[RMDB]
RNA sequence: GGGAACGACUCGAGUAGAGUCGAAAAUUCACACUGGGCCAAGAGCAGCUGCCAUUGCAGAUUCGAGUCACGUCCUUUUUUCCUUCCUUCUCCUUCUUGGAGUUACAACAGAAGCUGGGGAGGUGAGCUUUAUAACACUCUUCGGAGUGUUAUAAAGAAAAGAAACAACAACAACAAC
Reactivity to 2A3 in 0.01 (KOAc 150mM, MgCl2 10mM, bicine 150mM(pH8.5), 24C), signal-to-noise 3, nucleotides 027 to 126: u100u040c020a000c000a000c080u050g000g020g030c030c020a040a010g020a020g030c020a010g030c020u050g020c020c030a090u040u120g010c020a010g050a130u060u040c010g010a000g030u010c020a010c100g070u060c000c000u040u070u030u010u050u060c010c000u030u010c000c010u040u030c020u000c010c000u020u090c020u040u100g030g000a060g040u100u080a080c050a160a010c000a030g030a050a000g030c060u110g000g000g000g000a020g000g000u020g000a010g010
Reactivity to DMS in 0.01 (KOAc 150mM, MgCl2 10mM, bicine 150mM(pH8.5), 24C), signal-to-noise 5, nucleotides 027 to 126: u000u000c030a080c080a110c080u000g010g020g010c050c050a060a070g000a090g010c060a060g000c040u010g010c030c080a070u000u010g020c100a100g010a110u000u000c020g000a050g010u010c030a080c190g000u000c000c000u000u000u010u000u020u000c030c020u000u000c020c000u000u010c010u000c060c010u000u010c030u010u000g020g010a110g000u010u010a080c200a090a130c070a050g000a020a020g010c110u010g010g010g020g020a020g000g000u010g000a060g010